[RMDB]
RNA sequence: GGGAACGACUCGAGUAGAGUCGAAAAUCAUACGGAGAUGUCUCAUAGUAGAAUCAUUUGUCAUGUGAGGUCGAAGGUCACAGACUGUGCAGCCCUAGAUCCAAUCUGAUACACAGUAACCUACAGCGAGAGUAACUCCUUUCGAGGAGUUAUUUUCAAAAGAAACAACAACAACAAC
Reactivity to DMS in 0.01 (KOAc 150mM, MgCl2 10mM, bicine 150mM(pH8.5), 24C), signal-to-noise 9, nucleotides 027 to 126: u000c040a060u000a080c090g000g000a090g000a060u000g010u010c020u000c020a110u000a110g010u000a040g010a110a080u010c060a090u000u000u010g010u010c050a050u000g010u000g000a140g000g010u000c040g010a120a200g010g010u000c040a040c050a070g000a070c100u000g010u000g010c110a080g000c030c020c020u000a170g010a040u000c040c050a050a090u000c040u000g000a070u000a060c110a050c080a050g000u000a070a090c060c010u000a050c120a080g010c190
Reactivity to 2A3 in 0.01 (KOAc 150mM, MgCl2 10mM, bicine 150mM(pH8.5), 24C), signal-to-noise 6, nucleotides 027 to 126: u060c000a000u050a040c020g010g000a090g000a010u040g100u020c000u000c020a100u110a030g100u030a010g020a040a020u060c020a060u040u030u110g040u020c020a040u080g010u010g020a040g000g010u010c010g010a040a010g000g010u010c000a010c000a020g240a100c070u080g010u020g000c030a030g030c000c000c000u000a010g000a020u000c010c010a020a040u000c010u020g010a010u040a050c060a000c000a050g030u030a040a040c010c010u030a030c040a020g020c020
Structure probing data (DMS and 2A3) for a 177-nucleotide construct. High 2A3 reactivity points to a flexible backbone, as in loops and unpaired stretches. For DMS, 39,513 sequencing reads were counted. The RNA was probed in 150 mM KOAc, 10 mM MgCl2 and 150 mM bicine (pH 8.5) at 24 C.